This 207-nucleotide RNA was probed chemically with 2A3 and DMS.
DMS adducts were read by reverse transcription with MarathonRT.
The reactions ran in a buffer of 150 mM KOAc, 10 mM MgCl2 and 150 mM bicine (pH 8.5), at 24 C.
It was measured as part of the RMDB library OK3TST.
2A3 adducts were read by reverse transcription with SuperScript II with manganese.
Values are in units of 0.01, from 0 to 300, in steps of 10.
For DMS, 3,083 sequencing reads were counted.
RNA sequence: GGGAACGACUCGAGUAGAGUCGAAAACAGCUCUGUGGUCUACAGGAUACCUCAUGGUGGUUUUAUUGACCAGACAAUAAUCCUCUUUCUAAGGGGAUGCAUUUCAUUAAUACAUAUGUAGAUCAUGAAUUGUCUUUGACUUUGAGGGGAUGGUAGCCGUCACCUAGUUUUUCGAAACUAGGUGACGAAAAGAAACAACAACAACAAC
Reactivity to 2A3 in 0.01 (KOAc 150mM, MgCl2 10mM, bicine 150mM(pH8.5), 24C), signal-to-noise 4, nucleotides 027 to 156: c010a020g040c030u010c020u100g040u020g000g050u030c010u010a000c020a020g090g030a110u120a140c020c030u040c040a040u100g010g050u040g010g050u040u040u040u150a190u120u240g040a030c000c010a010g040a030c020a010a070u090a070a020u020c000c010u020c010u040u150u080c110u300a040a030g000g000g000g010a000u010g000c010a010u000u050u060c020a010u040u120a110a050u070a070c050a080u160a080u300g020u040a020g010a040u060c010a010u050g020a020a050u030u040g000u000c000u110u130u140g060a040c000u020u030u050g020a010g000g000g010g030a020u030g020g010u030a020g050c020
Reactivity to DMS in 0.01 (KOAc 150mM, MgCl2 10mM, bicine 150mM(pH8.5), 24C), signal-to-noise 2, nucleotides 027 to 156: c040a130g020c040u000c020u010g050u010g010g000u000c010u000a070c020a090g030g030a210u000a060c020c020u000c060a070u060g010g050u000g000g010u000u000u000u000a100u010u000g010a060c030c070a070g000a120c060a040a120u010a140a090u000c010c000u000c010u000u010u020c150u010a100a040g010g000g030g020a040u010g010c070a100u000u000u000c060a100u000u000a060a150u000a060c050a260u000a190u000g020u000a040g010a080u010c060a030u000g000a050a060u000u010g000u000c030u000u000u010g010a070c050u000u000u000g010a070g000g000g020g010a120u000g010g000u000a090g040c120